[RMDB]
Structure probing data (DMS) for a 177-nucleotide construct. The DMS profile rests on 3,622 reads. Source: RMDB library TTRINS, as collected in RNAgym. For DMS the reverse transcriptase was MarathonRT.
RNA sequence: GGGAACGACUCGAGUAGAGUCGAAAAGAUAUGGAGGCUGGAGGGAGCCAGACCCCUCAUGGGUAUAUCGGAAACGAUAUACCCAUGAGAACUCUGGAACUACUCCCGAUGAAAGCCUCCUAAGUCAUCACUCAUAAUAGUUCGCUAUUAUGAGUGAAAAAGAAACAACAACAACAAC
Reactivity to DMS in 0.01 (KOAc 150mM, MgCl2 10mM, bicine 150mM(pH8.5), 24C), signal-to-noise 4, nucleotides 027 to 126: g000a060u010a300u000g000g000a020g020g010c000u000g000g010a050g030g020g010a020g000c010c000a010g000a030c230c180c210c050u000c000a010u010g000g000g020u010a010u000a010u010c000g000g010a180a110a270c000g030a020u000a010u000a000c000c000c000a000u000g000a000g010a110a140c300u000c010u010g000g010a070a020c040u020a300c000u000c000c000c020g010a070u000g000a230a190a090g000c000c000u000c000c000u000a010a060g010u000c050a210